[RMDB]
RNA sequence: GGGAACGACUCGAGUAGAGUCGAAAAGAAUGAAGAUUCGUCUUCAUUCAAAUAAAAAUAGCUAGAAAACGAUCAAAACUAGCAAAAUACAUAACGAUCGUAAAACACAGCGUUUCGACGCUGUGAACUAAGUGGAAGUGUUCGCACUUCCACUUAGAAAAGAAACAACAACAACAAC
Reactivity to 2A3 in 0.01 (KOAc 150mM, MgCl2 10mM, bicine 150mM(pH8.5), 24C), signal-to-noise 2, nucleotides 027 to 126: g020a010a010u010g010a000a000g010a030u070u060c120g040u010c050u020u010c000a000u010u000c000a000a010a000u070a000a040a000a010a000u110a040g000c010u000a000g030a030a110a010a000c010g010a010u010c030a000a130a020a110c010u010a000g020c000a060a170a000a030u140a040c050a030u140a070a080c090g010a000u010c010g020u040a010a030a150a000c010a000c000a000g020c000g000u000u030u130c210g030a030c000g000c010u010g000u000g010a010a020
Reactivity to DMS in 0.01 (KOAc 150mM, MgCl2 10mM, bicine 150mM(pH8.5), 24C), signal-to-noise 2, nucleotides 027 to 126: g030a030a000u010g000a020a010g020a120u000u000c280g030u000c010u000u010c000a010u000u010c000a050a100a050u040a020a060a100a150a100u010a110g000c000u000a010g010a150a060a070a020c010g000a000u000c020a110a050a090a130c000u010a010g000c020a070a070a080a090u000a040c220a050u020a090a080c250g000a010u010c020g000u000a070a030a100a170c000a000c000a040g000c000g020u000u000u010c140g020a000c000g000c000u000g020u000g010a040a050

The record gives the reactivity of an RNA of 177 nucleotides to 2A3 and DMS. Reactivities are given for positions 27 through 126. DMS adducts were read by reverse transcription with MarathonRT. In probing experiments dimethyl sulfate is read out at A N1 and C N3, which are open when not base-paired. 2A3 adducts were read by reverse transcription with SuperScript II with manganese.